The data come from the RNA Mapping Database (RMDB), library OK1LIB. This 177-nucleotide RNA was probed chemically with 2A3. The reactions ran in a buffer of 150 mM KOAc, 10 mM MgCl2 and 150 mM bicine (pH 8.5), at 24 C.
RNA sequence: GGGAACGACUCGAGUAGAGUCGAAAAUCGUUAAAGCAUCUUACCAAUAUCUGUGCAUGUUUGUUGAGAGUGUCUUGUUGCACUUCUCUAUUUGGUGUCAUGCAUUUAUAAGACUUGUCGAAAGUCGCCUACUCCGUCGCUUCGGCGACGGAGUAGGAAAAGAAACAACAACAACAAC
Reactivity to 2A3 in 0.01 (KOAc 150mM, MgCl2 10mM, bicine 150mM(pH8.5), 24C), signal-to-noise 2, nucleotides 027 to 126: u090c140g000u020u080a300a070a000g010c030a080u030c000u180u030a040c000c020a000a280u160a070u140c190u220g000u000g000c000a000u100g040u210u190u000g140u070u090g000a010g000a090g000u000g010u000c000u040u190g170u300u110g000c010a000c000u300u000c000u020c010u130a100u070u300u020g120g020u110g010u010c000a000u000g000c010a000u030u070u050a110u010a130a030g020a000c000u000u070g050u100c050g130a080a020a000g020u000c000g010
Source information
For 2A3 the reverse transcriptase was SuperScript II with manganese. As a SHAPE reagent, 2A3 marks flexible, mostly unpaired nucleotides at the ribose 2'-OH. Reactivities are given for positions 27 through 126.